This 207-nucleotide RNA was probed chemically with 2A3 and DMS.
RNA sequence: GGGAACGACUCGAGUAGAGUCGAAAAAACCCUGAUAAUCAGACAAGGCACACAAUUUGGAAUCAUGUGUAUUAUCAAAAUGGGGACGAUGUAUGGAGAAAAGUAUCCAGUGGUGUUGAUGCUGUAGGAGUGUACUAUUUAGAACACGAUGGCUAUACUGUAUGAAAUAGUUCGCUAUUUCAUACAGAAAAGAAACAACAACAACAAC
Reactivity to 2A3 in 0.01 (KOAc 150mM, MgCl2 10mM, bicine 150mM(pH8.5), 24C), signal-to-noise 4, nucleotides 027 to 156: a000a000c050c000c000u070g060a110u050a190a060u060c020a000g050a080c070a130a080g080g030c050a010c010a020c020a120a150u060u060u160g120g000a120a080u100c030a050u030g040u000g030u060a110u130u050a050u110c070a050a060a020a050u090g010g000g000g000a020c040g020a010u030g020u080a040u100g040g020a020g020a030a080a040a020g040u050a030u040c040c010a010g020u010g020g020u050g020u020u080g020a020u050g030c030u020g040u030a020g030g020a030g020u040g000u020a030c000u010a050u100u210u140a020g020a040a010c040a000c030g060a030u070g040g020c010u030a020u040a100
Reactivity to DMS in 0.01 (KOAc 150mM, MgCl2 10mM, bicine 150mM(pH8.5), 24C), signal-to-noise 3, nucleotides 027 to 156: a080a050c010c000c010u000g010a160u000a060a140u000c070a130g020a100c050a070a080g000g020c040a050c020a070c040a020a090u000u000u010g020g020a160a080u000c060a060u010g020u000g030u000a080u010u010a050u020c060a050a050a060a090u010g010g020g000g010a060c020g010a090u000g000u000a060u000g000g000a060g000a050a060a040a080g020u010a060u000c000c000a100g040u010g030g020u000g030u000u000g010a120u010g010c020u000g000u000a090g000g030a130g010u000g030u000a080c070u000a130u010u000u010a140g010a060a080c060a040c070g000a050u010g010g030c030u000a080u010a150
The DMS profile rests on 7,328 reads. 2A3 adducts were read by reverse transcription with SuperScript II with manganese. The data come from the RNA Mapping Database (RMDB), library OK3TST.